[RMDB]
RNA sequence: GGGAACGACUCGAGUAGAGUCGAAAAGUGUGGGCGCUUGGGGCAAGUUCCUUGGAAGAGGACAGCAUGGAGGGUGAUACUCCCGUUCAUCCCUGAGUUGCUCGUGCGUACGAUCCGUUUUCUUUGAUCAGGUUAGUAAAUUCGUUUACUAACCUGAAAAAGAAACAACAACAACAAC
Reactivity to DMS in 0.01 (KOAc 150mM, MgCl2 10mM, bicine 150mM(pH8.5), 24C), signal-to-noise 8, nucleotides 027 to 126: g020u000g020u010g010g010g020c020g010c010u000u000g020g000g000g010c300a060a070g000u010u000c000c000u000u010g000g070a300a110g000a030g000g000a030c010a080g020c110a190u010g030g010a100g000g000g010u000g010a110u020a070c070u010c000c000c020g000u010u000c040a220u020c010c000c000u000g000a030g000u000u030g030c000u000c010g020u000g000c010g010u010a090c220g010a100u010c040c050g000u010u000u000u000c010u000u000u010g010a180
Reactivity to 2A3 in 0.01 (KOAc 150mM, MgCl2 10mM, bicine 150mM(pH8.5), 24C), signal-to-noise 6, nucleotides 027 to 126: g030u020g010u030g010g010g000c010g000c010u020u000g000g000g010g020c030a040a050g060u150u020c000c000u000u010g050g030a070a030g010a010g030g010a010c010a010g030c020a070u140g010g010a030g020g000g000u030g020a050u070a100c040u020c020c010c000g050u040u040c020a090u100c000c000c000u010g010a020g010u080u300g130c000u000c000g000u000g000c000g030u050a050c050g020a080u030c050c030g000u030u020u020u010c030u040u050u050g090a230